[RMDB]
Chemical mapping of a 207-nucleotide RNA with DMS and 2A3. The RNA was probed in 150 mM KOAc, 10 mM MgCl2 and 150 mM bicine (pH 8.5) at 24 C. The 2A3 profile rests on 3,395 reads. Values cover nucleotides 27 to 156. The data come from the RNA Mapping Database (RMDB), library M2RFPK.
RNA sequence: GGGAACGACUCGAGUAGAGUCGAAAAAGUUCGCGCUUCCGUGAAACGCGAAAAUCGGACGGUGGCUGCAAGUCGCAUCGCAAAACCGCGGUAAGUGGAGUUAGCGAGAGGAGGCUGGGUUUUGGCUAGAACACACGGUACUUCGGUACCGUGUGAACUAAGAACAACGAUUCGUCGUUGUUCUUAGAAAAGAAACAACAACAACAAC
Reactivity to DMS in 0.01 (KOAc 150mM, MgCl2 10mM, bicine 150mM(pH8.5), 24C), signal-to-noise 3, nucleotides 027 to 156: a090g000u000u010c010g020c010g040c020u000u020c030c180g010u020g020a100a040a010c000g020c010g010a040a020a070a100u000c040g010g000a150c030g010g010u010g040g010c020u000g010c060a090a070g030u010c040g000c050a130u000c040g000c030a050a080a100a140c020c030g000c020g010g030u000a080a110g030u010g000g030a150g010u010u000a160g000c010g020a100g010a110g010g000a070g030g010c040u000g010g010g020u000u000u000u000g020g000c050u000a090g000a080a190c000a030c000a010c000g010g000u000a000c000u000u000c260g040g010u000a010c000c000g010u000g010u000g010a010a080
Reactivity to 2A3 in 0.01 (KOAc 150mM, MgCl2 10mM, bicine 150mM(pH8.5), 24C), signal-to-noise 4, nucleotides 027 to 156: a000g070u020u040c020g000c000g000c060u120u030c050c030g110u090g060a100a100a010c020g000c010g050a060a020a010a050u120c040g020g020a030c050g040g030u060g010g040c040u070g020c100a070a030g040u050c020g010c060a070u030c020g000c020a030a040a040a040c040c030g000c030g100g030u210a140a050g030u030g020g000a040g010u060u100a020g010c020g020a050g010a040g060g020a030g010g020c030u040g040g010g000u020u050u040u100g040g000c010u030a060g060a140a010c010a000c000a000c010g000g000u000a000c000u020u050c190g080g000u000a000c000c000g000u000g000u000g000a000a000